Notes: The record gives the reactivity of an RNA of 177 nucleotides to DMS. For DMS the reverse transcriptase was MarathonRT. The RNA was probed in 150 mM KOAc, 10 mM MgCl2 and 150 mM bicine (pH 8.5) at 24 C.
[RMDB]
RNA sequence: GGGAACGACUCGAGUAGAGUCGAAAAGAUAUGGACGGCCCGUAGAGGGAGAGCCUGCGUCGGAAACGACGCUGGCUCGAAGAACUCUACACUCCCGUCCUAAGUCAAACUAUCCUUCGGGAUAGAACAAGUAAGGCAGGUUCGCCUGCCUUACUUGAAAAGAAACAACAACAACAAC
Reactivity to DMS in 0.01 (KOAc 150mM, MgCl2 10mM, bicine 150mM(pH8.5), 24C), signal-to-noise 1, nucleotides 027 to 126: g000a090u000a030u020g030g000a000c000g040g000c300c270c040g020u020a020g000a020g010g040g090a060g000a000g000c000c000u010g010c050g000u000c000g010g060a010a070a100c000g000a040c010g020c000u000g020g060c000u000c020g000a090a260g000a160a220c000u000c000u000a000c020a260c210u000c210c020c010g040u010c010c000u000a040a040g000u000c020a190a120a280c010u000a000u000c000c000u000u020c160g040g010g000a020u010a020g000a090a220